About this RNA
An RNA of 177 nucleotides, treated with DMS and read out base by base. The data come from the RNA Mapping Database (RMDB), library TTRDEL. DMS adducts were read by reverse transcription with MarathonRT.
RNA sequence: GGGAACGACUCGAGUAGAGUCGAAAAGAUAUGGACCCGAUCCUCGACGAAGUCAGUCGGAAACGACUGAGCAGAGAGGCAGAGGGUCCUAAGUCAAAACCAUUGUUCUGUUCGCAGAACAAUGGAACCUUUGUAUAUCCUUCGGGAUAUACAAAGGAAAAGAAACAACAACAACAAC
Reactivity to DMS in 0.01 (KOAc 150mM, MgCl2 10mM, bicine 150mM(pH8.5), 24C), signal-to-noise 5, nucleotides 027 to 126: g020a030u010a300u010g000g000a030c000c010c020g010a300u000c000c000u010c010g000a300c160g000a090a120g000u000c000a000g000u010c010g010g010a080a080a140c000g020a010c000u000g000a020g000c000a050g000a300g000a010g000g000c210a010g000a300g020g000g000u000c000c000u000a000a100g000u000c030a040a080a130a130c000c000a010u010u000g000u000u000c000u010g000u010u020c220g000c000a000g000a000a000c000a000a000u010g000g000a050a060
For DMS, 4,271 sequencing reads were counted.